This 177-nucleotide RNA was probed chemically with 2A3 and DMS. For 2A3 the reverse transcriptase was SuperScript II with manganese. The DMS profile rests on 803 reads. In probing experiments dimethyl sulfate is read out at A N1 and C N3, which are open when not base-paired. The reactions ran in a buffer of 150 mM KOAc, 10 mM MgCl2 and 150 mM bicine (pH 8.5), at 24 C. The data come from the RNA Mapping Database (RMDB), library OK2TRN.
RNA sequence: GGGAACGACUCGAGUAGAGUCGAAAAAGACAGGGACUUUGGAAGCAUGGUUUGCAGAUGCUCUCCAUUAACAGAAGUGCUCCUAGGGAUAAGACAAUUGUGUCACCCCAGUGGUCUUAGAGGAACCCGUCCGUAUGAGGUUCGCCUCAUACGGACGAAAAGAAACAACAACAACAAC
Reactivity to 2A3 in 0.01 (KOAc 150mM, MgCl2 10mM, bicine 150mM(pH8.5), 24C), signal-to-noise 1, nucleotides 027 to 126: a020g100a050c030a030g030g020g020a010c020u050u060u130g000g040a130a000g000c050a000u010g100g160u130u160u230g170c070a070g040a290u140g030c000u040c000u000c030c000a040u210u070a020a010c000a050g140a140a030g070u060g110c030u000c000c010u050a070g000g020g020a060u110a190a110g000a040c010a040a020u250u300g160u000g020u160c030a060c020c000c000c020a090g020u040g030g030u060c000u000u050a070g030a120g030g060a050a030c050c050
Reactivity to DMS in 0.01 (KOAc 150mM, MgCl2 10mM, bicine 150mM(pH8.5), 24C), signal-to-noise 1, nucleotides 027 to 126: a110g000a030c040a230g000g000g020a140c050u000u010u000g000g040a050a030g000c090a030u000g010g000u000u000u000g010c190a110g000a060u000g020c020u010c100u000c050c010a040u000u010a050a180c150a090g020a060a040g020u000g020c040u020c040c040u000a050g050g010g010a070u030a100a070g000a000c020a090a150u030u000g000u010g010u010c020a220c070c030c010c010a050g030u000g010g000u010c000u000u000a100g010a130g000g030a130a180c030c030